[RMDB]
This 177-nucleotide RNA was probed chemically with 2A3 and DMS. For 2A3, 5,023 sequencing reads were counted. The DMS profile rests on 6,561 reads. For 2A3 the reverse transcriptase was SuperScript II with manganese. Values cover nucleotides 27 to 126. Source: RMDB library OK2TST, as collected in RNAgym.

RNA sequence: GGGAACGACUCGAGUAGAGUCGAAAAGCAACUGUCGGUUCCAUCAGCCCAUAUAUCGGUCUAUUUGGAACGGUGUGGGGUAUCAUGCAUGCGUUUAUUGCUCUUGGAGAGGUAAAACAAGCUACGACGGUAAUUUACGAUUCGUCGUAAAUUACCGAAAAGAAACAACAACAACAAC
Reactivity to 2A3 in 0.01 (KOAc 150mM, MgCl2 10mM, bicine 150mM(pH8.5), 24C), signal-to-noise 3, nucleotides 027 to 126: g020c020a010a060c020u080g020u080c070g050g030u040u020c020c000a050u040c040a010g040c010c030c020a070u130a010u010a020u160c050g030g000u010c020u040a250u130u200u270g030g000a020a010c020g010g020u040g000u030g000g000g000g000u050a080u120c050a030u110g030c010a010u040g030c020g010u040u050u080a110u090u070g020c010u010c010u050u070g020g010a060g000a020g010g040u070a040a050a050a000c040a060a000g010c030u080a040c060g100a010
Reactivity to DMS in 0.01 (KOAc 150mM, MgCl2 10mM, bicine 150mM(pH8.5), 24C), signal-to-noise 5, nucleotides 027 to 126: g030c070a080a090c070u000g020u000c040g000g010u000u000c020c000a070u010c130a120g000c020c010c020a060u020a070u010a060u010c080g000g000u000c020u000a160u010u010u010g010g010a020a020c030g000g010u000g020u010g010g000g000g010u000a060u010c090a080u000g010c040a040u000g000c070g030u000u000u000a060u010u010g010c020u000c040u000u000g000g000a090g020a070g000g000u000a020a040a060a070c100a060a080g010c070u010a070c130g010a130